[RMDB]
RNA sequence: GGGAACGACUCGAGUAGAGUCGAAAAGUGCAGGCUCUGGCGCAGUGUGCAGCCUUCCGCGAAGGCCUCCUGCGCCUCGACCAGCGUGCACUGCAGGGCAGCAGCGCGGUGCCGGGUGCGUUGGCGGAACUCGGACGUCGUUCGCGACGUCCGAGUUAAAAGAAACAACAACAACAAC
Reactivity to DMS in 0.01 (KOAc 150mM, MgCl2 10mM, bicine 150mM(pH8.5), 24C), signal-to-noise 1, nucleotides 027 to 126: g020u010g020c000a020g010g020c010u000c060u040g010g010c000g000c010a020g020u020g010u010g000c130a190g010c010c010u000u010c010c290g040c260g010a050a000g010g020c000c010u000c050c000u000g010c010g010c010c010u000c070g000a120c160c150a050g000c030g030u010g000c020a010c030u010g010c130a100g000g030g010c070a100g010c070a060g010c030g010c080g020g020u010g010c050c050g000g010g030u010g010c040g010u010u000g000g000c050g010g000
Overview
This 177-nucleotide RNA was probed chemically with DMS. Values cover nucleotides 27 to 126. Conditions: 150 mM KOAc, 10 mM MgCl2 and 150 mM bicine (pH 8.5), 24 C. The DMS profile rests on 1,286 reads.